[RMDB]
RNA sequence: GGGAACGACUCGAGUAGAGUCGAAAAUAAUAGGCUUGCUAUUGCUUUGGCUUAAAUAUUGGAGACUGUUACUUUGAAUAUUGAUAAUUGGCAUCCAUCAUACUUAAGUAAAUCAAUAAAAAGUAUAAAAAAGGAUACUAUUCGUAGUAUCCUUUUUAAAAGAAACAACAACAACAAC
Reactivity to DMS in 0.01 (KOAc 150mM, MgCl2 10mM, bicine 150mM(pH8.5), 24C), signal-to-noise 3, nucleotides 027 to 126: u010a080a170u000a090g010g010c020u010u010g020c160u000a050u000u000g000c070u000u010u000g020g010c020u000u000a020a040a120u000a050u010u000g000g000a090g010a090c090u000g010u000u000a020c010u000u000u020g010a160a100u020a070u000u000g010a080u010a030a080u000u010g040g010c160a100u000c030c040a040u010c070a060u000a030c010u000u000a030a060g000u010a050a030a030u000c010a020a030u020a040a060a180a020a050g000u000a120u010a000
Annotation: The record gives the reactivity of an RNA of 177 nucleotides to DMS. The RNA was probed in 150 mM KOAc, 10 mM MgCl2 and 150 mM bicine (pH 8.5) at 24 C. DMS (dimethyl sulfate) methylates the pairing face of unpaired adenines and cytosines. It was measured as part of the RMDB library OK2TRN. Reactivities are rounded to 0.1 and cut off at 0 and 3.